Structure probing data (2A3 and DMS) for a 177-nucleotide construct. For DMS the reverse transcriptase was MarathonRT. Conditions: 150 mM KOAc, 10 mM MgCl2 and 150 mM bicine (pH 8.5), 24 C.

RNA sequence: GGGAACGACUCGAGUAGAGUCGAAAAUUAUGCCCACACAGCCAUCCUCUAGUAAGUUUGUAAAAUGUCUGGUGAGAUGUGGGAACUUAUUGGAAACAACAAUUUGCUUAAUAGCAUCCUAGUGCCAAUAAUGCUGAACUUUCGAGUUCAGCAUUAUAAAAGAAACAACAACAACAAC
Reactivity to 2A3 in 0.01 (KOAc 150mM, MgCl2 10mM, bicine 150mM(pH8.5), 24C), signal-to-noise 7, nucleotides 027 to 126: u140u060a090u150g070c000c000c000a000c010a000c000a010g000c010c000a050u070c020c060u080c040u070a070g040u070a210a130g050u060u120u170g170u160a070a070a070a120u140g050u060c050u050g080g030u080g120a160g020a090u020g010u020g020g020g020a010a020c020u040u040a040u030u050g020g010a110a080a060c050a040a000c020a030a120u030u030u080g000c000u070u180a080a020u120a240g010c010a010u030c000c030u040a000g030u000g100c000c010a010
Reactivity to DMS in 0.01 (KOAc 150mM, MgCl2 10mM, bicine 150mM(pH8.5), 24C), signal-to-noise 6, nucleotides 027 to 126: u010u030a090u050g000c000c010c010a100c110a070c080a220g000c050c030a050u010c090c060u000c030u010a050g020u010a070a060g010u010u010u010g010u020a050a040a110a040u010g000u010c030u000g000g020u030g020a050g000a040u010g010u000g000g010g000a040a040c020u010u020a020u010u010g000g000a090a120a090c170a050a090c120a050a070u020u010u010g010c010u000u010a070a090u010a070g010c020a050u000c030c020u010a050g020u000g000c030c070a060